[RMDB]
RNA sequence: GGGAACGACUCGAGUAGAGUCGAAAAGAGAACAUCAAGCUCAAGAACCACACUAACAGCGUCAUGUUCUGGCUGGUCAGAGACCGAAGACCGUAUGGAACGCCUAUGGAUUUCGGACAAGUGUUCAGCCGGUAAUUAACUUCGGUUAAUUACCGGCAAAAGAAACAACAACAACAAC
Reactivity to 2A3 in 0.01 (KOAc 150mM, MgCl2 10mM, bicine 150mM(pH8.5), 24C), signal-to-noise 1, nucleotides 027 to 126: g080a000g000a000a000c030a090u120c070a020a060g020c010u000c120a070a000g030a020a000c050c010a020c030a040c120u070a110a050c090a090g050c000g080u080c030a090u100g020u030u070c050u000g040g000c000u000g000g090u080c040a020g020a000g000a090c020c010g000a050a000g000a090c000c010g020u070a150u270g000g040a160a130c090g140c070c000u050a090u050g040g000a140u000u020u070c020g010g000a050c040a000a130g050u010g020u120u060c020a040
Reactivity to DMS in 0.01 (KOAc 150mM, MgCl2 10mM, bicine 150mM(pH8.5), 24C), signal-to-noise 1, nucleotides 027 to 126: g040a070g020a020a110c000a060u030c090a220a070g020c000u000c150a080a080g010a150a090c040c300a050c120a010c060u000a140a090c110a080g020c100g000u010c140a110u000g020u020u040c030u000g000g010c100u000g020g000u010c050a120g060a150g020a070c030c010g000a040a010g020a060c000c050g030u000a020u000g000g020a120a090c300g020c010c000u000a010u020g020g000a120u000u000u030c040g000g000a090c070a120a060g000u010g050u000u000c020a110
Source: RMDB library OK2TRN, as collected in RNAgym. Chemical mapping of a 177-nucleotide RNA with 2A3 and DMS. For 2A3 the reverse transcriptase was SuperScript II with manganese. Reactivities are given for positions 27 through 126.